The record gives the reactivity of an RNA of 207 nucleotides to 2A3 and DMS. The reactions ran in a buffer of 150 mM KOAc, 10 mM MgCl2 and 150 mM bicine (pH 8.5), at 24 C.
RNA sequence: GGGAACGACUCGAGUAGAGUCGAAAAGAUGAAACUUUAGAGGAUAAGGCAGGAAUUGAUGGCUUUGGUUCUGCUCCUGCACGAAAAUUUAGGCAAAGAUAAGCAUGUAGAAAGCUUAUGAUUUCCUCGUUUGGACGAGGGUUCGAUUCCCUCCAGCCCAGUAUCAUAAGUUCGCUUAUGAUACUGGAAAAGAAACAACAACAACAAC
Reactivity to 2A3 in 0.01 (KOAc 150mM, MgCl2 10mM, bicine 150mM(pH8.5), 24C), signal-to-noise 7, nucleotides 027 to 156: g090a070u120g040a040a060a010c040u090u150u100a070g000a000g020g000a010u030a060a070g020g000c010a000g020g050a060a080u130u120g070a100u150g100g030c080u140u060u100g090g000u130u060c030u050g020c020u000c000c000u010g000c030a030c070g030a010a020a020a020u100u130u130a050g050g000c030a070a050a000g050a030u020a000a010g010c020a030u150g040u110a060g140a160a090a010g000c010u020u010a010u040g090a100u040u040u030c000c000u020c010g040u060u080u110g070g030a040c060g010a010g000g000g010u000u030c020g000a000u010u030c000c000c000u010c000c010a020g010c000
Reactivity to DMS in 0.01 (KOAc 150mM, MgCl2 10mM, bicine 150mM(pH8.5), 24C), signal-to-noise 5, nucleotides 027 to 156: g010a140u000g020a130a130a050c050u010u010u000a130g010a080g020g010a100u000a090a120g010g030c010a040g000g030a060a110u000u010g010a130u000g020g020c080u000u010u010g020g020u000u000c020u000g000c030u000c000c020u000g110c040a100c040g010a050a040a080a110u000u010u000a090g030g010c060a070a080a140g000a060u000a020a040g020c010a100u010g010u010a190g020a130a100a100g000c020u000u000a030u000g010a130u000u010u000c010c010u010c040g010u000u000u000g020g010a100c050g030a040g030g020g020u000u000c070g010a300u000u000c010c000c000u010c010c030a080g020c150
Description
It was measured as part of the RMDB library ARCHII.